[RMDB]
An RNA of 207 nucleotides, treated with DMS and 2A3 and read out base by base. The reactions ran in a buffer of 150 mM KOAc, 10 mM MgCl2 and 150 mM bicine (pH 8.5), at 24 C.
RNA sequence: GGGAACGACUCGAGUAGAGUCGAAAAUGUUAAAGUAGUUUCGACUACUUUAACAAAAAAGCGUACUACGAUCGCAAGGAUUUCAUCCCAAAUAGGAUGGAAUCUGAUGACCGAGUCGUAUCGCAAAAAGAGUUAUGGUGUUCGCACCAUAACUCAACAUGCUCUCAACCUUCGGGUUGAGAGCAUGAAAAGAAACAACAACAACAAC
Reactivity to DMS in 0.01 (KOAc 150mM, MgCl2 10mM, bicine 150mM(pH8.5), 24C), signal-to-noise 1, nucleotides 027 to 156: u010g000u010u000a000a000a000g010u000a000g020u010u000u000c220g020a050c000u000a010c000u000u000u000a000a030c000a000a050a110a120a130a080g000c020g000u000a150c090u000a110c020g050a140u000c010g000c020a200a300g000g000a000u000u000u000c000a030u020c020c000c000a080a120a170u000a010g020g000a080u000g000g020a010a000u010c000u000g000a080u000g000a130c200c020g010a150g030u000c070g000u000a050u000c030g000c060a110a010a090a130a090g000a040g010u000u000a000u000g000g050u000g020u000u000c300g040c000a000c000c010a050u000a000a010c000u000c000a000a090
Reactivity to 2A3 in 0.01 (KOAc 150mM, MgCl2 10mM, bicine 150mM(pH8.5), 24C), signal-to-noise 2, nucleotides 027 to 156: u050g000u000u010a010a000a000g000u000a020g020u120u090u050c240g100a020c010u000a000c000u000u000u000a000a000c000a000a050a000a000a000a080g050c020g020u050a030c010u020a020c010g030a040u070c000g000c080a060a120g010g000a010u000u000u000c000a000u030c040c030c030a130a300a190u250a120g000g000a010u000g000g000a000a000u020c000u000g020a050u160g040a030c010c030g000a000g060u040c020g000u020a110u300c050g000c040a070a080a140a000a000g020a010g010u010u000a000u000g010g010u000g020u050u160c290g010c090a000c000c000a010u000a000a000c000u000c000a000a000
For 2A3, 1,790 sequencing reads were counted.